[RMDB]
The data come from the RNA Mapping Database (RMDB), library TTRDES. An RNA of 177 nucleotides, treated with DMS and 2A3 and read out base by base. For DMS the reverse transcriptase was MarathonRT. The 2A3 profile rests on 18,114 reads.
RNA sequence: GGGAACGACUCGAGUAGAGUCGAAAAGAUAUGGAGUUUAGCUGCACUAUGAUGCUAUCUCGGAAACGAGAUAGUUAAUAGUGAACUACAGCGAAGACUCCUAAGUCAAAACUCGCCUUCGGGCGAGGACAGCUAUAAGGUUCGCCUUAUAGCUGUCAAAAGAAACAACAACAACAAC
Reactivity to DMS in 0.01 (KOAc 150mM, MgCl2 10mM, bicine 150mM(pH8.5), 24C), signal-to-noise 6, nucleotides 027 to 126: g010a050u010a300u000g010g000a010g010u000u000u000a300g020c000u000g000c000a020c020u000a000u000g000a220u000g010c000u000a000u000c000u000c000g000g000a100a070a230c010g000a020g000a000u000a000g000u000u000a150a010u000a000g010u000g000a080a040c100u010a300c010a000g020c010g000a140a200g000a010c000u000c000c000u010a030a100g010u000c040a130a100a100a300c000u000c000g010c000c000u010u010c190g030g010g000c000g000a000g010
Reactivity to 2A3 in 0.01 (KOAc 150mM, MgCl2 10mM, bicine 150mM(pH8.5), 24C), signal-to-noise 6, nucleotides 027 to 126: g030a030u090a080u200g030g010a020g010u200u300u040a020g000c000u030g000c000a000c000u010a010u040g060a050u300g020c010u000a000u000c000u000c000g020g010a080a100a040c020g000a000g000a000u000a000g000u000u010a010a010u000a000g010u000g000a010a010c040u170a040c030a000g000c010g010a020a030g010a010c000u000c010c000u010a130a010g020u000c020a020a020a070a240c000u010c000g000c020c000u070u120c300g140g000g020c000g000a000g010